[RMDB]
RNA sequence: GGGAACGACUCGAGUAGAGUCGAAAAUUCGAGGAGCACCAGUCCUUAAGCUUAGCAUACCUGCAUAUCACACAGGAGGAAGCGUGAAAGCGUAACGACCGUUCCUAAAUACGCAUUGCUAAGCCGAUAUUAAAUUUAUAUUCGUAUAAAUUUAAUAAAAAGAAACAACAACAACAAC
Reactivity to DMS in 0.01 (KOAc 150mM, MgCl2 10mM, bicine 150mM(pH8.5), 24C), signal-to-noise 4, nucleotides 027 to 126: u020u020c050g000a050g000g000a060g020c060a120c080c030a190g010u000c030c040u000u010a130a130g010c000u000u010a020g000c010a030u010a080c100c070u010g010c060a140u020a080u030c180a130c190a130c070a030g020g000a120g020g000a090a160g000c030g010u000g020a100a080a170g020c030g010u010a020a120c090g000a100c120c060g010u000u000c000c010u010a040a090a110u020a020c050g000c020a070u000u000g020c010u000a000a020g010c000c010g000a140
Reactivity to 2A3 in 0.01 (KOAc 150mM, MgCl2 10mM, bicine 150mM(pH8.5), 24C), signal-to-noise 2, nucleotides 027 to 126: u070u040c020g010a020g010g000a010g010c040a010c080c010a020g080u030c000c000u020u070a070a000g000c000u000u000a000g000c000a010u000a060c000c010u000g000c040a030u070a060u140c040a030c010a000c010a030g000g020a020g020g050a040a050g010c000g000u020g000a130a000a000g040c020g020u020a010a060c030g060a060c030c010g030u020u040c000c000u000a000a070a000u120a010c010g010c000a010u000u000g000c000u010a000a000g000c000c000g000a000